[RMDB]
RNA sequence: GGGAACGACUCGAGUAGAGUCGAAAAAGGGGUAUGGCCCUCCACUAAGUCAUGGGAGCUGAAUGUAUGUGUUUCUCCGUUGUCCUGCAUGUGGUGGGUUGAUGGCAAGCACUUCAUGAGACUUGCCGUAGAUUUGUGUGUUCGCACACAAAUCUACAAAAGAAACAACAACAACAAC
Reactivity to 2A3 in 0.01 (KOAc 150mM, MgCl2 10mM, bicine 150mM(pH8.5), 24C), signal-to-noise 6, nucleotides 027 to 126: a000g080g010g010g010u120a090u150g070g010c010c000c000u010c000c000a020c010u090a080a060g030u070c010a040u090g090g010g000a020g020c040u050g080a140a030u090g100u250a090u130g150u030g050u020u090u040c060u000c010c010g020u020u030g080u100c010c040u050g030c040a100u120g000u020g010g030u020g010g010g010u000u030g030a110u080g010g000c000a000a000g000c020a060c030u080u090c060a150u170g080a020g010a130c000u000u000g000c010c000
Reactivity to DMS in 0.01 (KOAc 150mM, MgCl2 10mM, bicine 150mM(pH8.5), 24C), signal-to-noise 4, nucleotides 027 to 126: a040g030g000g000g000u020a070u030g010g000c010c010c000u020c030c020a020c020u020a110a130g010u020c030a030u010g000g000g000a090g010c230u030g000a110a100u000g000u010a080u030g000u020g010u020u010u000c010u000c030c020g010u010u010g010u000c030c030u020g020c150a050u010g020u000g000g010u000g010g000g020u000u010g010a070u000g000g020c020a000a000g000c060a140c100u010u020c210a130u010g000a130g010a210c000u000u000g000c010c000
The record gives the reactivity of an RNA of 177 nucleotides to 2A3 and DMS. For DMS the reverse transcriptase was MarathonRT. Values cover nucleotides 27 to 126. It was measured as part of the RMDB libraries RFM100 and RFMREP.